[RMDB]
RNA sequence: GGGAACGACUCGAGUAGAGUCGAAAACCACCGAAGUUCGCUUCGGUGGAAAAGAUACCGGUCUCGGUUUCAAAGUGAGACCCACAGACCACAGGAAACUGAAAACCGAUCCGUUCGCGGAUCGGAAGUAUAUAACACCGUUCGCGGUGUUAUAUACAAAAGAAACAACAACAACAAC
Reactivity to DMS in 0.01 (KOAc 150mM, MgCl2 10mM, bicine 150mM(pH8.5), 24C), signal-to-noise 5, nucleotides 027 to 126: c000c000a010c000c000g010a010a010g010u000u000c250g020c000u000u000c010g010g020u000g010g000a000a020a070a120g000a100u020a120c080c050g040g000u000c000u000c150g010g000u000u000u000c020a110a140a190g030u010g000a010g010a010c000c010c070a080c170a030g000a020c000c020a160c080a070g000g000a090a050a080c040u000g000a110a070a120a160c010c000g000a000u000c000c000g010u000u000c180g010c010g020g000a000u000c000g010g010a000a030
Reactivity to 2A3 in 0.01 (KOAc 150mM, MgCl2 10mM, bicine 150mM(pH8.5), 24C), signal-to-noise 6, nucleotides 027 to 126: c000c000a000c010c000g010a010a010g010u050u110c110g100c120u010u000c010g000g000u000g010g000a010a000a000a020g070a020u140a080c050c060g010g020u000c020u010c030g010g070u030u030u020c200a300a300a080g180u160g090a010g010a010c000c010c000a060c020a020g020a010c000c020a030c050a080g090g040a120a080a010c050u090g030a060a050a050a090c000c000g000a010u000c010c000g020u040u050c250g000c010g090g000a000u000c000g000g000a000a010
This 177-nucleotide RNA was probed chemically with DMS and 2A3. The RNA was probed in 150 mM KOAc, 10 mM MgCl2 and 150 mM bicine (pH 8.5) at 24 C. It was measured as part of the RMDB library M2PK50.